[RMDB]
RNA sequence: GGGAACGACUCGAGUAGAGUCGAAAAAAAGAUAUGGACUGAACUACACCAAGGUGAGGCGAAGAACACUAAUCGGAAACGAUUAGUGGGAGCCUCACAGCAGCACUGGUGCAGUCCUAAGUCAAAACGUCUAGAAUAAGUUCGCUUAUUCUAGACGAAAAGAAACAACAACAACAAC
Reactivity to DMS in 0.01 (KOAc 150mM, MgCl2 10mM, bicine 150mM(pH8.5), 24C), signal-to-noise 5, nucleotides 027 to 126: a070a070a100g000a020u000a100u010g000g000a040c000u000g000a110a070c220u020a250c040a020c000c020a040a130g020g010u000g020a010g000g010c010g000a090a160g000a130a180c010a010c000u000a000a010u000c000g020g000a030a030a050c000g000a000u000u000a000g000u000g010g020g000a050g000c000c000u000c000a000c000a030g010c190a110g030c180a300c100u010g000g010u000g010c000a000g000u010c000c010u000a010a070g000u000c020a080a080a090a190
Reactivity to 2A3 in 0.01 (KOAc 150mM, MgCl2 10mM, bicine 150mM(pH8.5), 24C), signal-to-noise 3, nucleotides 027 to 126: a000a000a010g020a010u030a010u050g000g000a000c000u010g010a230a080c110u200a030c190a010c030c010a040a020g150g000u010g000a000g010g000c040g150a300a020g020a020a000c000a000c010u010a000a010u000c000g000g000a010a010a000c000g000a010u010u000a000g000u020g000g010g000a010g000c010c010u000c000a000c000a000g010c060a010g030c020a030c150u010g010g000u000g000c000a000g000u000c000c010u010a020a000g020u010c020a010a020a060a180